Background:
An RNA of 177 nucleotides, treated with 2A3 and DMS and read out base by base. For DMS the reverse transcriptase was MarathonRT. Reactivities are given for positions 27 through 126. The 2A3 profile rests on 2,911 reads. It was measured as part of the RMDB library M2PK90.
RNA sequence: GGGAACGACUCGAGUAGAGUCGAAAAAUAAACCGGAAGCGACGCAGCAAGCCCGAGCGGAAGGGCAACCGGAAUGCGUAUCUCAACUCGCCCGAGACGCACCUGAGAGACGGGAAUGCGUAAAAAACUAUACCAACUACUUCGGUAGUUGGUAUAGAAAAGAAACAACAACAACAAC
Reactivity to 2A3 in 0.01 (KOAc 150mM, MgCl2 10mM, bicine 150mM(pH8.5), 24C), signal-to-noise 2, nucleotides 027 to 126: a000u060a010a030a040c000c010g030g000a080a030g090c030g060a020c010g000c050a010g000c030a110a020g030c000c000c000g040a060g050c070g110g060a040a040g020g000g000c000a020a040c010c000g020g000a050a050u070g010c000g030u030a130u050c060u000c040a020a040c020u030c050g020c010c010c010g020a020g000a030c020g000c010a050c010c010u060g040a140g010a000g020a130c060g010g000g050a050a150u050g010c020g020u120a060a050a000a030a000a030
Reactivity to DMS in 0.01 (KOAc 150mM, MgCl2 10mM, bicine 150mM(pH8.5), 24C), signal-to-noise 3, nucleotides 027 to 126: a090u030a020a090a150c010c010g000g000a140a250g010c090g020a040c050g020c020a080g000c070a140a110g000c020c030c020g010a120g020c090g000g010a120a080g010g010g010c000a120a100c030c010g010g020a100a070u000g010c030g000u000a100u010c050u020c030a070a050c080u000c060g000c010c030c040g000a050g000a090c020g010c030a060c010c020u000g010a110g010a140g010a100c070g000g000g000a070a060u000g010c020g010u000a000a060a070a070a050a090